[RMDB]
RNA sequence: GGGAACGACUCGAGUAGAGUCGAAAAGCCACAUAUCCCGUGACAUUGCGAAAGCAAGGCUAGCGGUAGGUAGUCCUGGGCGGCGACAGCCUUGGACUGCGGCGUAAAGGUGUACCUGGGGCCGUUAUAACGCGGUAACAGUUCGCUGUUACCGCAACCUUAACAUGGUGUUCGCACCAUGUUAAGGAAAAGAAACAACAACAACAAC
Reactivity to 2A3 in 0.01 (KOAc 150mM, MgCl2 10mM, bicine 150mM(pH8.5), 24C), signal-to-noise 3, nucleotides 027 to 156: g020c010c000a060c020a080u140a010u080c010c020c010g000u030g030a030c040a110u010u040g010c030g070a160a020a030g000c030a020a000g040g050c080u060a020g000c000g040g020u050a050g030g100u040a000g010u010c020c010u000g000g000g000c020g050g040c080g070a040c120a020g000c000c000u010u000g010g000a010c020u020g000c000g000g000c000g000u070a050a060a010g030g000u110g040u130a100c020c010u020g010g010g040g010c030c000g000u000u030a110u080a110a090c160g010c000g000g020u000a010a000c000a000g020u050u050c150g060c130u000g000u000u000a000c000c000g000c000a010a010
Reactivity to DMS in 0.01 (KOAc 150mM, MgCl2 10mM, bicine 150mM(pH8.5), 24C), signal-to-noise 1, nucleotides 027 to 156: g010c040c030a070c060a160u020a150u020c100c010c010g010u010g000a050c070a080u000u000g020c050g030a130a140a280g030c010a060a020g000g040c020u000a040g070c020g020g050u010a100g010g030u020a030g020u000c000c030u000g000g030g020c000g000g000c050g000a080c110a220g000c030c000u000u000g010g000a010c020u000g010c000g000g000c040g030u000a030a070a100g010g020u010g040u000a110c010c010u000g000g000g020g070c050c010g030u000u020a110u000a090a120c090g010c000g030g020u000a000a030c000a020g000u000u010c200g030c010u020g000u010u000a010c010c000g000c000a000a000

Chemical mapping of a 207-nucleotide RNA with 2A3 and DMS. For 2A3 the reverse transcriptase was SuperScript II with manganese. For 2A3, 2,579 sequencing reads were counted. For DMS, 3,135 sequencing reads were counted. For DMS the reverse transcriptase was MarathonRT.